[RMDB]
RNA sequence: GGGAACGACUCGAGUAGAGUCGAAAAGGGCCGUUCACUGGAUCCGAAGCCUCUAGAAGGAUAAUAUAGGCACUCCAUACCCUACUCCGACUCAAUACGUUCCCGUCGUACAGAAUGGUAACAUAUCGAACACAACCUAACUUCGGUUAGGUUGUAAGAUGACGUCUUACUUCGGUAAGACGUCAUCAAAAGAAACAACAACAACAAC
Reactivity to 2A3 in 0.01 (KOAc 150mM, MgCl2 10mM, bicine 150mM(pH8.5), 24C), signal-to-noise 1, nucleotides 027 to 156: g030g040g000c040c020g130u210u160c060a080c150u020g010g010a130u300c020c020g000a000a000g000c000c020u000c010u010a290g060a300a110g140g000a000u130a290a070u090a100u130a150g000g000c010a020c020u150c000c000a060u050a020c000c000c000u030a040c050u000c010c020g020a000c050u000c020a000a130u150a100c020g000u000u010c020c010c010g020u020c020g000u010a070c040a040g050a170a160u040g030g000u160a140a020c000a050u200a160u130c010g050a050a000c050a040c000a060a000c000c000u000a000a000c000u050u030c080g090g000u000u000a000g010g000u020u000g000u000a000a010